[RMDB]
RNA sequence: GGGAACGACUCGAGUAGAGUCGAAAACGAUCAAUUGUCCGCUUGCGCCAAUCACUCGAUGGCAGGGCACAAUAAUGGCGAUGGGAUUUCUGCUGUUGGCCAAUCCCACGGCACGCGCAGCGCCAGAACGCAUCGUGGUGUUCGCACCACGAUGCGUAAAAGAAACAACAACAACAAC
Reactivity to DMS in 0.01 (KOAc 150mM, MgCl2 10mM, bicine 150mM(pH8.5), 24C), signal-to-noise 1, nucleotides 027 to 126: c120g000a210u010c050a120a080u000u000g000u000c020c140g070c100u050u000g020c080g020c000c000a050a080u040c040a050c200u010c190g000a010u020g000g000c050a300g000g000g000c090a100c090a020a000u000a050a190u000g000g010c020g020a130u000g000g020g010a020u000u000u000c160u040g020c010u010g040u070u020g000g050c120c030a160a020u010c250c000c000a090c070g000g010c050a020c080g000c020g000c020a020g000c080g030c060c050a060g000a090
Reactivity to 2A3 in 0.01 (KOAc 150mM, MgCl2 10mM, bicine 150mM(pH8.5), 24C), signal-to-noise 1, nucleotides 027 to 126: c040g010a060u180c050a090a070u080u020g000u060c110c030g000c020u030u070g010c070g000c030c020a170a170u030c050a060c160u110c090g050a040u020g030g000c000a010g040g010g000c000a000c010a080a080u210a090a050u090g020g000c000g090a080u020g050g060g030a060u120u040u050c040u040g030c050u110g090u160u170g030g000c030c000a000a150u140c020c000c000a010c000g040g000c000a020c040g070c010g000c010a000g000c010g010c020c000a000g020a060